[RMDB]
RNA sequence: GGGAACGACUCGAGUAGAGUCGAAAAGGCUGAGUUGACGAUCAUCCGGUCCAGUCCAAACCGCUGCAUCAGCACGACCAUCCGUGCUUCGUCCAUCUUGGUAUCCGGAUAGAUGGAGGAGCCCAUCCCCUCCCGGGGUAUUCGUACCCCGGGAGGGAAAAGAAACAACAACAACAAC
Reactivity to 2A3 in 0.01 (KOAc 150mM, MgCl2 10mM, bicine 150mM(pH8.5), 24C), signal-to-noise 3, nucleotides 027 to 126: g070g000c080u040g040a030g040u090u010g090a110c080g020a060u080c020a020u060c030c000g040g000u040c080c040a010g110u070c000c010a050a040a000c000c070g000c020u030g000c010a170u020c010a060g020c040a030c070g030a060c010c040a010u040c050c060g070u070g020c000u000u000c020g300u010c020c000a000u000c030u000u030g060g020u150a160u060c010c010g020g040a070u010a050g000a000u020g010g010a000g000g020a010g020c000c010c010a070u030c030

This 177-nucleotide RNA was probed chemically with 2A3. Reactivities are given for positions 27 through 126. Source: RMDB library OK1LIB, as collected in RNAgym.